[RMDB]
This 177-nucleotide RNA was probed chemically with 2A3 and DMS. It was measured as part of the RMDB library TTRDES.
RNA sequence: GGGAACGACUCGAGUAGAGUCGAAAAAAAAAGAUAUGGAACGCUACCCACCUAUUCUAACGCUAUGAAGCACGCUCGGAAACGAGCGUGUGGAGCGUUACUAUAGAGGCGUUCCUAAGUCAAAAAACCUAAUACGAAGGUUCGCCUUCGUAUUAGGAAAAGAAACAACAACAACAAC
Reactivity to 2A3 in 0.01 (KOAc 150mM, MgCl2 10mM, bicine 150mM(pH8.5), 24C), signal-to-noise 1, nucleotides 027 to 126: a000a000a000a010a000g080a050u120a030u080g000g000a010a000c000g000c000u080a150c040c030c020a030c000c000u000a030u030u020c010u030a010a000c010g000c020u060a170u300g030a020a000g000c000a010c000g000c020u000c000g030g000a040a030a010c000g000a000g000c020g000u000g000u010g010g000a000g010c000g000u000u000a000c000u000a000u000a010g020a030g030g000c000g010u010u000c000c000u000a000a010g040u020c040a020a020a040a130a130a150
Reactivity to DMS in 0.01 (KOAc 150mM, MgCl2 10mM, bicine 150mM(pH8.5), 24C), signal-to-noise 2, nucleotides 027 to 126: a010a030a080a060a090g010a010u000a040u000g020g030a010a010c000g010c020u000a130c060c020c050a300c300c020u010a010u000u000c100u020a000a030c000g020c010u000a280u010g000a080a170g010c000a000c000g020c000u000c010g000g010a040a050a140c030g010a040g000c010g000u000g030u010g000g000a000g020c000g010u000u010a000c030u000a020u000a030g000a300g010g030c000g010u000u000c000c010u000a040a040g000u030c040a020a040a100a090a050a050